[RMDB]
This 207-nucleotide RNA was probed chemically with 2A3. It was measured as part of the RMDB library OK3TST. Reactivities are given for positions 27 through 156. As a SHAPE reagent, 2A3 marks flexible, mostly unpaired nucleotides at the ribose 2'-OH.
RNA sequence: GGGAACGACUCGAGUAGAGUCGAAAAGCUGGCCGAACGGCAUGCCCUUUUCAGGAGCAUCAAUGGCGCUGAGCCGUAUGGUGGUCUGCGGCUGGCCGUCGCAGUGAACCUUCAAUGUGUCGCCAUCGGUGAUGGCGACGACCAGGCAGACAUACGCCCGCAUAGACAGGUUCGCCUGUCUAUGCGGAAAAGAAACAACAACAACAAC
Reactivity to 2A3 in 0.01 (KOAc 150mM, MgCl2 10mM, bicine 150mM(pH8.5), 24C), signal-to-noise 1, nucleotides 027 to 156: g010c040u070g020g120c000c070g050a130a000c080g080g000c010a000u160g000c050c000c020u050u110u000u080c300a290g010g010a170g060c040a000u060c000a210a040u100g010g010c000g110c140u160g070a000g000c000c000g030u030a260u110g020g000u050g000g180u000c050u130g070c060g060g020c030u000g040g000c010c000g000u000c000g000c000a040g040u120g170a210a160c000c000u190u050c100a170a250u100g000u050g000u070c000g000c000c000a000u020c080g110g090u300g100a020u000g000g030c000g000a000c000g000a000c000c080a020g130g000c000a020g040a200c020a120u220a120c020g030c050
The reactions ran in a buffer of 150 mM KOAc, 10 mM MgCl2 and 150 mM bicine (pH 8.5), at 24 C.